RNA sequence: GGGAACGACUCGAGUAGAGUCGAAAAGUCAGCCACCGGAUGCCCGAGGGUGUGGUGUUCGUCUACCACGUGCAGGAGCGCACCGUGGACACGCCGCGCACCGAGACCAACGGCAAACGCGGCGGCAGUGCUUCCUGUGAUUCGUCACAGGAAGCACAAAAGAAACAACAACAACAAC
Reactivity to DMS in 0.01 (KOAc 150mM, MgCl2 10mM, bicine 150mM(pH8.5), 24C), signal-to-noise 3, nucleotides 027 to 126: g000u000c050a100g000c010c000a030c100c030g010g000a270u000g010c000c000c000g020a300g000g000g030u010g010u020g000g040u000g020u010u000c040g000u000c030u000a170c010c020a010c010g040u000g030c060a140g010g050a150g030c180g000c020a040c110c100g030u000g000g010a070c170a090c170g010c080c000g000c070g000c050a020c010c000g030a140g010a150c090c050a040a300c280g000g000c070a020a010a160c030g020c030g010g000c000g000g030c030a070
Reactivity to 2A3 in 0.01 (KOAc 150mM, MgCl2 10mM, bicine 150mM(pH8.5), 24C), signal-to-noise 1, nucleotides 027 to 126: g020u040c060a030g010c000c010a020c000c020g020g010a010u030g010c010c010c020g020a060g020g000g060u090g090u140g010g000u020g020u030u050c030g020u000c020u030a080c010c000a010c030g000u020g010c020a060g080g300a150g120c080g000c020a020c050c110g040u020g020g090a300c030a000c100g020c000c000g000c000g000c000a010c000c010g000a070g100a060c000c020a000a020c010g000g000c000a050a120a000c090g030c020g030g040c000g010g000c020a020

This 177-nucleotide RNA was probed chemically with DMS and 2A3.
The 2A3 profile rests on 2,920 reads.
For 2A3 the reverse transcriptase was SuperScript II with manganese.
For DMS, 1,639 sequencing reads were counted.
2A3 is a SHAPE reagent: it acylates the 2'-hydroxyl of flexible nucleotides of all four kinds.